Description:
An RNA of 177 nucleotides, treated with 2A3 and read out base by base. The reactions ran in a buffer of 150 mM KOAc, 10 mM MgCl2 and 150 mM bicine (pH 8.5), at 24 C. The data come from the RNA Mapping Database (RMDB), library OK1LIB.

RNA sequence: GGGAACGACUCGAGUAGAGUCGAAAAAGUACGCGUCGGCGUCUGUGGGGCGGAAGACAGUCUUUUUCUGGGGGACAGCGCCACCAGUAUCGGCGUCGACUCCGAGGGCGGCUGCUUCACUGCAGGCGGUCGACUCGUCGUUCGCGACGAGUCGACCAAAAGAAACAACAACAACAAC
Reactivity to 2A3 in 0.01 (KOAc 150mM, MgCl2 10mM, bicine 150mM(pH8.5), 24C), signal-to-noise 1, nucleotides 027 to 126: a000g140u120a000c010g050c050g040u000c000g060g030c000g020u020c000u020g060u040g000g030g040g000c180g030g000a070a000g100a080c040a030g020u010c000u000u180u000u050u020c190u240g010g000g000g030g050a040c060a030g010c040g020c000c000a120c000c010a110g010u130a130u300c130g000g010c000g010u030c000g170a060c000u000c000c000g000a030g080g010g050c040g000g010c010u000g000c020u000u030c030a070c120u040g000c000a000g000g020c000